[RMDB]
RNA sequence: GGGAACGACUCGAGUAGAGUCGAAAAGGUAUCAAGAGUGGUUUAGAACUCCUCGGUCCGCCUAUGGUGCGUGAGGGUGAUGGUAGCGAGCGUACGGAUGUGACUCCUCUUGAGUGCAGGAUACGCGGCAUUAGACUGGAUUCGUCCAGUCUAAUGCAAAAGAAACAACAACAACAAC
Reactivity to 2A3 in 0.01 (KOAc 150mM, MgCl2 10mM, bicine 150mM(pH8.5), 24C), signal-to-noise 4, nucleotides 027 to 126: g070g000u080a040u100c040a040a050g030a050g030u080g080g100u050u100u130a090g030a050a030c010u030c010c020u030c040g000g110u010c010c020g020c000c010u120a160u170g140g000u120g040c080g020u100g030a060g030g040g000u050g020a070u040g030g050u050a010g040c040g060a010g030c030g050u070a040c050g060g010a030u120g020u040g080a020c010u000c000c020u090c000u040u080g050a030g030u050g040c030a020g050g040a040u040a090c060g020c030g080
Reactivity to DMS in 0.01 (KOAc 150mM, MgCl2 10mM, bicine 150mM(pH8.5), 24C), signal-to-noise 5, nucleotides 027 to 126: g010g010u030a060u000c060a060a080g010a040g020u000g000g010u000u000u000a130g000a130a090c060u000c050c010u000c040g010g020u010c050c030g020c030c030u010a100u000g020g010u010g020c050g010u010g000a080g020g000g030u010g000a070u000g020g000u010a060g010c070g010a080g010c060g020u000a050c110g000g000a100u000g010u020g000a070c030u010c060c160u000c060u000u010g010a050g020u010g000c040a070g000g010a100u000a050c080g010c070g020
The record gives the reactivity of an RNA of 177 nucleotides to 2A3 and DMS. 2A3 is a SHAPE reagent: it acylates the 2'-hydroxyl of flexible nucleotides of all four kinds. High DMS reactivity at an A or C suggests that its Watson-Crick edge is free. The RNA was probed in 150 mM KOAc, 10 mM MgCl2 and 150 mM bicine (pH 8.5) at 24 C. Values cover nucleotides 27 to 126. For DMS, 6,566 sequencing reads were counted. DMS adducts were read by reverse transcription with MarathonRT.